[RMDB]
RNA sequence: GGGAACGACUCGAGUAGAGUCGAAAAGAUAUGGAAACAAACAGGACAGCUUAGUUGUCAGCUGAAUGCGUCGGAAACGACGCACAGCUUGGAUUUACUAAGCACGUCCUGUUUGUUUCCUAAGUCAGUUAUAGCCUAUGUUCGCAUAGGCUAUAACAAAAGAAACAACAACAACAAC
Reactivity to DMS in 0.01 (KOAc 150mM, MgCl2 10mM, bicine 150mM(pH8.5), 24C), signal-to-noise 4, nucleotides 027 to 126: g010a070u010a300u010g000g000a000a010a020c000a010a010a010c000a000g010g000a030c000a160g010c000u000u000a010g010u000u000g010u010c010a050g010c000u000g010a110a130u000g020c000g010u000c010g020g010a130a110a300c000g010a020c010g020c000a020c000a010g010c010u000u010g030g010a010u000u000u000a010c000u000a000a000g020c000a050c220g010u000c000c000u010g010u000u000u000g000u000u000u000c000c000u000a000a070g010u000c040a190